[RMDB]
RNA sequence: GGGAACGACUCGAGUAGAGUCGAAAAAUCACUACGAUAUCUCUGCCACCGGCGUCGGCGUCGUCGAGGCGGACAAUGUGCUGGGUCCCGACCGGGUCAAACCCGGCGACGUCAUCAUCGCGAUGGGACAUAUCCCACUCUUCGGAGUGGGAUAUGUAAAAGAAACAACAACAACAAC
Reactivity to DMS in 0.01 (KOAc 150mM, MgCl2 10mM, bicine 150mM(pH8.5), 24C), signal-to-noise 2, nucleotides 027 to 126: a030u000c040a120c150u030a100c120g010a080u000a040u020c080u000c020u000g000c020c000a030c080c020g020g040c040g000u000c110g020g010c010g020u000c030g020u000c010g010a090g010g000c150g010g000a040c080a070a120u000g020u000g010c030u010g000g030g000u000c030c020c020g010a210c050c050g010g010g020u000c140a050a030a300c010c020c000g000g020c010g000a000c040g010u000c020a050u000c060a030u000c030g020c050g020a030u010g000g010g000
Reactivity to 2A3 in 0.01 (KOAc 150mM, MgCl2 10mM, bicine 150mM(pH8.5), 24C), signal-to-noise 2, nucleotides 027 to 126: a000u080c050a040c080u230a070c190g010a050u040a080u080c030u010c020u060g060c000c010a110c100c000g090g010c050g010u080c070g090g010c020g000u050c010g000u000c000g000a060g050g100c000g070g000a050c060a080a200u200g030u070g040c050u030g000g000g070u010c000c010c000g020a070c100c010g090g010g060u070c090a140a150a130c000c000c000g030g050c000g020a000c010g030u040c010a030u060c020a010u070c060g020c040g120a060u050g000g020g040